The record gives the reactivity of an RNA of 177 nucleotides to DMS. For DMS, 1,843 sequencing reads were counted. For DMS the reverse transcriptase was MarathonRT. Values cover nucleotides 27 to 126.

RNA sequence: GGGAACGACUCGAGUAGAGUCGAAAAAAAAGAUAUGGACCAACCUCCCCACCCUUGUAGGGCGUUGAUCUGUCUUCGGAAACGAAGACAGGGAGCCUGAGGAGGAGGGUUGGUCCUAAGUCAAAAAUCGAAUUAAGAAGUUCGCUUCUUAAUUCGAAAAAGAAACAACAACAACAAC
Reactivity to DMS in 0.01 (KOAc 150mM, MgCl2 10mM, bicine 150mM(pH8.5), 24C), signal-to-noise 2, nucleotides 027 to 126: a090a100a080a170g010a060u020a260u000g000g000a030c010c000a020a010c000c000u000c050c010c000c030a300c110c020c040u000u020g000u010a240g000g000g030c000g010u000u020g020a030u010c020u000g000u000c000u000u000c000g010g000a070a070a070c010g020a010a040g000a000c000a000g020g000g020a000g020c010c000u000g020a100g020g000a050g010g000a040g010g000g000u000u000g000g020u000c000c000u000a000a060g020u020c040a050a060a100a120a140